This 177-nucleotide RNA was probed chemically with DMS and 2A3. It was measured as part of the RMDB library OK2TST.
[RMDB]
RNA sequence: GGGAACGACUCGAGUAGAGUCGAAAAGUGACUCUGUUACCGGAGUCGGAGUGUAGCGAUGCGCCGCUGCUUACCGAGCCGACCGACUGUCUGCGACUGGUGGCCGACGAUCACGACGUGACCGUCCCCGUACGCCUCACUUCGGUGAGGCGUACGGAAAAGAAACAACAACAACAAC
Reactivity to DMS in 0.01 (KOAc 150mM, MgCl2 10mM, bicine 150mM(pH8.5), 24C), signal-to-noise 1, nucleotides 027 to 126: g010u000g000a020c010u000c040u000g040u010u000a170c200c070g070g020a030g000u000c000g000g000a110g040u010g000u000a040g000c030g000a130u000g010c020g010c110c000g010c010u000g010c010u000u000a120c120c010g000a140g020c050c020g020a030c110c100g010a090c060u000g010u000c080u000g020c060g000a060c170u000g010g000u000g040g000c030c060g030a050c060g010a080u000c020a040c020g010a190c120g070u000g000a010c000c000g000u040c080c060
Reactivity to 2A3 in 0.01 (KOAc 150mM, MgCl2 10mM, bicine 150mM(pH8.5), 24C), signal-to-noise 1, nucleotides 027 to 126: g120u120g010a010c010u030c040u080g080u150u150a080c050c110g110g000a000g020u000c020g000g000a070g030u110g000u090a010g040c040g000a030u130g070c010g020c080c000g040c000u040g000c000u010u000a030c000c050g030a040g060c000c000g030a040c090c000g060a070c070u070g010u040c040u010g020c030g080a060c040u080g010g030u040g030g050c000c010g020a040c000g020a010u020c020a010c070g140a010c080g020u000g000a030c000c020g090u070c050c000
2A3 adducts were read by reverse transcription with SuperScript II with manganese. For DMS, 899 sequencing reads were counted.